[RMDB]
Source: RMDB library M2PK90, as collected in RNAgym. Chemical mapping of a 177-nucleotide RNA with DMS and 2A3. 2A3 is a SHAPE reagent: it acylates the 2'-hydroxyl of flexible nucleotides of all four kinds. For 2A3, 1,069 sequencing reads were counted.

RNA sequence: GGGAACGACUCGAGUAGAGUCGAAAAGAAAAACGCCAAAAAGCAUUUAAAGUAUCCGGUCUAGGCGGGCAUGUUACCAUGCAAAGUUAUCGACAAUAACUUAGACCAAGUACGAAAGUACAAAAAACAUACCGCUAUACUUCGGUAUAGCGGUAUGAAAAGAAACAACAACAACAAC
Reactivity to DMS in 0.01 (KOAc 150mM, MgCl2 10mM, bicine 150mM(pH8.5), 24C), signal-to-noise 2, nucleotides 027 to 126: g010a040a140a060a100a090c050g010c000c020a020a010a040a110a070g030c080a040u000u000u000a030a110a140g020u000a080u020c170c090g000g000u000c000u010a120g000g020c060g000g010g010c000a000u000g010u040u010a090c300c000a020u000g020c000a040a040a010g030u000u000a000u000c120g000a160c190a040a070u020a000a020c010u010u010a070g000a030c000c020a140a170g000u000a020c000g010a120a020a160g000u010a030c040a030a020a050a120a070a050
Reactivity to 2A3 in 0.01 (KOAc 150mM, MgCl2 10mM, bicine 150mM(pH8.5), 24C), signal-to-noise 1, nucleotides 027 to 126: g110a000a060a030a020a010c010g000c000c000a010a040a020a040a020g020c030a100u050u100u270a130a120a040g010u030a050u110c080c100g010g030u030c000u010a030g000g000c010g000g000g000c000a020u000g000u090u090a060c120c060a010u010g050c030a020a010a010g000u000u010a010u070c050g150a090c110a070a030u030a050a020c000u000u020a010g000a000c020c010a040a000g020u000a000c010g020a000a030a020g070u030a030c000a000a130a020a040a020a000